The record gives the reactivity of an RNA of 170 nucleotides to 2A3 and DMS. 2A3 adducts were read by reverse transcription with SuperScript II with manganese. DMS adducts were read by reverse transcription with MarathonRT. The 2A3 profile rests on 4,637 reads. The RNA was probed in 150 mM KOAc, 10 mM MgCl2 and 150 mM bicine (pH 8.5) at 24 C. The DMS profile rests on 6,923 reads.
[RMDB]
RNA sequence: GGGAACGACUCGAGUAGAGUCGAAAAGGGUUGAGUAGCACCCAGAGGGAGGAAAUCACACGGAGAGAAACAGACAAAUCACCUCCAGAGGACCCCUUCAGCGAACAGAAGAGUCUCUCACGCGGUACAGGCAAUGCCUUCGGGCAUUGCAAAAGAAACAACAACAACAAC
Reactivity to 2A3 in 0.01 (KOAc 150mM, MgCl2 10mM, bicine 150mM(pH8.5), 24C), signal-to-noise 3, nucleotides 027 to 129: g020g000g030u050u060g030a040g070u120a030g050c030a020c000c000c020a010g060a050g050g010g010a030g000g020a020a020a000u060c000a040c000a000c110g000g000a010g000a000g010a020a110a010c060a050g170a020c030a010a120a020u070c010a020c010c020u020c030c010a010g010a010g040g010a020c010c000c000c000u000u050c020a020g010c020g070a030a000c010a040g030a040a000g010a000g010u000c000u010c010u010c000a080c000g030c000g030g000u100a040c010a030g030
Reactivity to DMS in 0.01 (KOAc 150mM, MgCl2 10mM, bicine 150mM(pH8.5), 24C), signal-to-noise 4, nucleotides 027 to 129: g020g000g030u000u040g010a160g000u010a130g030c000a080c020c020c070a050g020a000g000g000g000a040g010g000a050a060a040u020c060a120c130a090c200g070g020a050g010a070g020a000a110a100c170a080g060a060c080a100a070a060u000c090a060c060c040u030c030c020a070g020a070g070g000a170c300c070c000c000u030u030c040a040g050c090g000a050a020c040a030g020a050a050g000a070g070u030c000u040c030u000c040a060c110g020c000g060g010u040a090c210a050g010